The record gives the reactivity of an RNA of 207 nucleotides to DMS and 2A3. 2A3 adducts were read by reverse transcription with SuperScript II with manganese. The DMS profile rests on 2,360 reads. DMS adducts were read by reverse transcription with MarathonRT.

RNA sequence: GGGAACGACUCGAGUAGAGUCGAAAACCAGAUGACGGUCCUGCCAUGAGACCGCAACGAGAGCAUGUCGCAUCGAAUGGACUCGGGGAGUCGGCAGCUUCCCCCACGGAUGAGCGCCUAAUGCCGGAAGAGACGUGCAACUUCGGUUGCACGUCAAGUUUUAUCCAAUCUUCGGAUUGGAUAAAACAAAAGAAACAACAACAACAAC
Reactivity to DMS in 0.01 (KOAc 150mM, MgCl2 10mM, bicine 150mM(pH8.5), 24C), signal-to-noise 2, nucleotides 027 to 156: c010c020a150g050a160u000g000a110c020g010g010u000c000c000u000g020c040c260a160u030g000a090g010a020c000c010g020c030a080a090c070g020a070g030a120g000c010a070u000g010u010c040g010c030a060u000c040g020a110a300u000g000g010a130c070u000c110g000g010g040g020a050g020u010c000g040g020c060a300g000c040u010u010c010c000c000c030c010a130c080g030g030a190u000g010a090g020c070g060c040c050u000a080a070u000g050c000c010g030g000a210a130g010a170g010a010c010g000u000g000c010a030a030c000u000u020c260g020g010u020u010g020c000a040c020g000u000c010a000a040
Reactivity to 2A3 in 0.01 (KOAc 150mM, MgCl2 10mM, bicine 150mM(pH8.5), 24C), signal-to-noise 3, nucleotides 027 to 156: c000c000a030g080a160u200g040a080c000g000g000u000c000c010u060g070c080c020a150u130g070a020g000a110c000c000g000c030a030a070c090g110a020g030a020g130c040a040u010g040u060c010g020c060a100u050c080g060a090a040u110g020g030a060c060u050c180g000g000g020g010a010g020u080c050g050g000c030a030g000c010u060u090c020c000c000c000c010a050c050g090g000a050u110g060a040g020c050g000c020c020u080a120a030u040g000c000c010g040g020a060a010g060a030g000a040c000g000u000g000c000a000a000c010u030u030c070g100g000u000u000g000c000a000c000g000u000c000a000a000